[RMDB]
RNA sequence: GGGAACGACUCGAGUAGAGUCGAAAAGUGGGAGCUUCGGCGCCGGUGAAAUACCACUACCUUUAUUGUUUUUUUACUUAUUCAAUGAAGCGGAACUGGGCUUUACCGCCCAACUUCUAGCGUUAAGAACUGUCAAACAAUUCGUUGUUUGACAGUUAAAAGAAACAACAACAACAAC
Reactivity to DMS in 0.01 (KOAc 150mM, MgCl2 10mM, bicine 150mM(pH8.5), 24C), signal-to-noise 6, nucleotides 027 to 126: g010u020g000g000g010a150g010c090u000u000c070g010g020c080g030c070c060g000g010u000g010a050a090a070u040a160c020c020a020c050u010a160c050c030u000u020u020a110u020u000g000u010u000u000u000u040u020u010a300c090u010u000a050u030u010c080a060a060u010g000a060a050g010c050g000g020a040a070c160u000g000g010g000c020u000u000u030a110c300c180g000c010c000c000a000a010c130u000u000c010u000a090g010c060g000u010u010a040a050g000
Reactivity to 2A3 in 0.01 (KOAc 150mM, MgCl2 10mM, bicine 150mM(pH8.5), 24C), signal-to-noise 6, nucleotides 027 to 126: g050u070g010g010g020a070g030c010u060u080c050g090g020c030g000c020c030g030g020u070g070a090a050a050u180a050c010c000a010c030u060a070c010c000u090u170u070a080u060u070g060u030u000u010u000u010u040u020a080c060u050u080a040u120u080c030a060a100u170g050a060a010g010c090g100g010a010a000c010u000g000g000g020c000u070u100u090a050c020c030g000c000c000c000a040a070c000u030u000c010u040a080g010c020g030u040u040a050a010g020
Notes:
Structure probing data (DMS and 2A3) for a 177-nucleotide construct. Reactivities are given for positions 27 through 126. The RNA was probed in 150 mM KOAc, 10 mM MgCl2 and 150 mM bicine (pH 8.5) at 24 C.